[RMDB]
RNA sequence: GGGAACGACUCGAGUAGAGUCGAAAAAGAAAUAGCGAUAAUCGUAAGAGAAAUGUCCUUCACAUAGCGCUACGCACAGAACUAUAAGUAGCGCAAUAGCUAUUGAAGGACAUUACCUGCCAAAAAACAAUUACCAGUGGUUCGCCACUGGUAAUUGAAAAGAAACAACAACAACAAC
Reactivity to DMS in 0.01 (KOAc 150mM, MgCl2 10mM, bicine 150mM(pH8.5), 24C), signal-to-noise 2, nucleotides 027 to 126: a090g000a080a050a040u000a060g000c020g020a140u010a070a130u000c050g010u000a170a120g000a140g020a050a080a010u000g000u000c000c010u000u010c000a020c300a010u000a020g030c010g010c040u000a000c000g010c070a080c240a110g020a060a100c280u000a080u000a060a070g050u010a070g010c010g030c100a020a040u000a070g020c020u010a030u000u000g010a010a000g010g000a010c010a010u000u000a060c080c020u010g020c030c120a000a010a050a080a080a070
Reactivity to 2A3 in 0.01 (KOAc 150mM, MgCl2 10mM, bicine 150mM(pH8.5), 24C), signal-to-noise 3, nucleotides 027 to 126: a010g140a020a090a040u120a030g050c020g040a050u160a130a070u160c020g040u080a130a020g020a000g040a070a020a000u000g000u010c000c000u010u000c000a040c010a030u040a000g020c010g000c030u000a010c020g010c040a070c030a140g210a280a040c080u110a080u040a300a080g000u010a010g000c000g000c010a000a030u020a000g010c020u030a030u100u040g000a010a000g000g000a000c000a000u010u010a020c010c000u020g120c030c000a070a150a010a000a010a010
Chemical mapping of a 177-nucleotide RNA with DMS and 2A3.
DMS adducts were read by reverse transcription with MarathonRT.